[RMDB]
RNA sequence: GGGAACGACUCGAGUAGAGUCGAAAAUUUAAUGAAUUAGCUUCAAAAGUUACAAAAACAUCCUAUGAUAGCUUGGUCAAUAGCAUAGACGAAAUACAGGAAGACAGCGAAAUUGAAGAAAUUAGAACACAAAGUCAGUUUUCGAACUGACUUUGUGAAAAGAAACAACAACAACAAC
Reactivity to DMS in 0.01 (KOAc 150mM, MgCl2 10mM, bicine 150mM(pH8.5), 24C), signal-to-noise 2, nucleotides 027 to 126: u030u000u020a030a060u000g000a060a090u010u050a120g040c070u000u000c040a040a030a070a180g040u000u000a120c200a010a230a040a010a060c130a080u000c000c040u000a100u000g000a030u010a000g000c050u010u010g030g010u040c060a040a060u000a060g000c080a060u000a000g020a010c140g020a050a050a100u020a070c060a000g000g040a050a070g030a080c040a000g000c000g040a010a010a130u010u000g000a130a020g000a040a010a030u020u000a090g030a020a110
This 177-nucleotide RNA was probed chemically with DMS.
Reactivities are given for positions 27 through 126.
The reactions ran in a buffer of 150 mM KOAc, 10 mM MgCl2 and 150 mM bicine (pH 8.5), at 24 C.
For DMS, 1,685 sequencing reads were counted.